An RNA of 177 nucleotides, treated with DMS and 2A3 and read out base by base.

[RMDB]
RNA sequence: GGGAACGACUCGAGUAGAGUCGAAAAAGGGUGGAUGCGGUCGUGAGGCCCCGCCGGAGCAGGGCCCAUAGCUGGCAGUCGGCCUGGUUUUGCGUGGCCGCCUCGUAAAACCCCAUGAGGGGCCGGGCUAACGUCUCCGUUUCGACGGAGACGUUAGAAAAGAAACAACAACAACAAC
Reactivity to DMS in 0.01 (KOAc 150mM, MgCl2 10mM, bicine 150mM(pH8.5), 24C), signal-to-noise 1, nucleotides 027 to 126: a100g000g020g000u000g010g000a040u040g000c010g010g020u010c090g030u030g040a040g060g010c010c050c000c100g040c050c230g020g030a190g020c040a080g020g010g050c000c000c000a000u000a080g000c050u000g040g040c000a120g010u000c150g010g040c040c020u000g000g000u000u060u000u000g030c020g010u000g020g050c030c060g000c000c000u000c000g000u050a050a060a120a240c050c010c020c070a100u000g000a090g000g010g020g030c040c010g000g000g000
Reactivity to 2A3 in 0.01 (KOAc 150mM, MgCl2 10mM, bicine 150mM(pH8.5), 24C), signal-to-noise 1, nucleotides 027 to 126: a000g040g000g060u090g000g030a030u030g040c030g000g010u060c010g030u080g030a010g050g000c000c000c000c000g080c020c090g120g000a030g000c010a010g000g160g000c000c030c000a000u070a010g000c020u050g120g010c040a050g060u030c020g000g010c000c000u040g000g060u070u040u130u150g090c110g090u040g050g010c090c000g090c050c030u000c020g000u050a140a120a210a230c000c000c000c000a130u250g050a090g000g000g000g040c000c000g000g070g000
The RNA was probed in 150 mM KOAc, 10 mM MgCl2 and 150 mM bicine (pH 8.5) at 24 C.